An RNA of 207 nucleotides, treated with 2A3 and read out base by base. For 2A3, 1,661 sequencing reads were counted. The reactions ran in a buffer of 150 mM KOAc, 10 mM MgCl2 and 150 mM bicine (pH 8.5), at 24 C.

RNA sequence: GGGAACGACUCGAGUAGAGUCGAAAAGAUAUGGAUGACGAACUACGAUUCGCGUGACACUUGGAUUUAUCGAUCGGAAACGAUCGAUUGUCAGUGUCACCCGAAUCGCGUCAUCCUAAGUCAAACUAGAUGAUGUUGUUCGCAACAUCAUCUAGAAGUUCUUCCGACAGUUCGCUGUCGGAAGAACAAAAGAAACAACAACAACAAC
Reactivity to 2A3 in 0.01 (KOAc 150mM, MgCl2 10mM, bicine 150mM(pH8.5), 24C), signal-to-noise 2, nucleotides 027 to 156: g010a010u050a020u100g000g000a000u000g000a000c000g000a080a130c100u190a100c260g000a010u000u000c000g020c000g010u010g000a000c000a010c020u100u280g130g000a060u140u300u160a040u040c000g000a000u000c000g000g000a080a050a080c000g000a000u000c000g000a000u000u010g000u020c000a010g000u000g000u010c000a000c020c000c010g000a000a000u000c000g000c010g000u000c000a000u000c000c000u000a020a010g010u020c030a030a060a080c000u010a000g000a000u000g000a000u000g000u010u000g040u070u120c260g070c160a000a000c000a000u000c000a000u000c010u000a010g000a000a010